[RMDB]
Source information:
The record gives the reactivity of an RNA of 207 nucleotides to 2A3 and DMS. DMS adducts were read by reverse transcription with MarathonRT. The RNA was probed in 150 mM KOAc, 10 mM MgCl2 and 150 mM bicine (pH 8.5) at 24 C. Reactivities are given for positions 27 through 156.
RNA sequence: GGGAACGACUCGAGUAGAGUCGAAAACACAAUGUGCGCCAUUAACAUUGUUUAUGCAAGCACGUUUCGCAAUGUACGGCGCAGAAACAUUGGCAACACAAAUACGCUUCACGAUGUGCGGCACAGAAAAAGCUCGCGCACUUCGGUGCGCGAGCAACAAGACAUCAAGGUUCGCCUUGAUGUCUUGAAAAGAAACAACAACAACAAC
Reactivity to 2A3 in 0.01 (KOAc 150mM, MgCl2 10mM, bicine 150mM(pH8.5), 24C), signal-to-noise 3, nucleotides 027 to 156: c070a010c000a000a020u040g010u020g020c010g000c010c010a070u180u140a130a010c010a010u030u010g060u050u110u130a110u130g020c050a060a130g090c080a030c180g020u050u090u060c060g010c000a010a020u030g010u030a040c060g000g040c030g020c000a000g020a000a050a000c020a000u010u000g050g020c050a190a010c000a030c010a100a180a040u160a060c070g000c040u030u070c040a030c060g190a160u150g040u020g040c040g030g010c040a010c020a100g100a060a090a030a000a020g020c020u020c010g000c020g000c050a020c040u030u090c170g040g000u000g000c030g000c000g010a000g000c000a000a000
Reactivity to DMS in 0.01 (KOAc 150mM, MgCl2 10mM, bicine 150mM(pH8.5), 24C), signal-to-noise 1, nucleotides 027 to 156: c050a120c070a040a070u000g010u000g040c040g020c000c020a190u000u020a120a110c020a040u000u000g000u000u010u010a020u010g000c050a140a120g000c100a080c050g030u000u010u010c220g030c080a040a010u010g020u000a070c050g070g020c050g000c010a030g010a140a070a120c020a070u000u010g010g000c070a090a090c040a040c090a090a090a240u000a070c020g030c100u000u000c070a040c050g010a120u020g000u010g010c000g020g000c030a100c100a140g000a050a160a030a130a170g010c010u000c020g030c040g040c010a030c010u000u020c250g020g140u000g080c010g070c000g070a000g000c010a040a010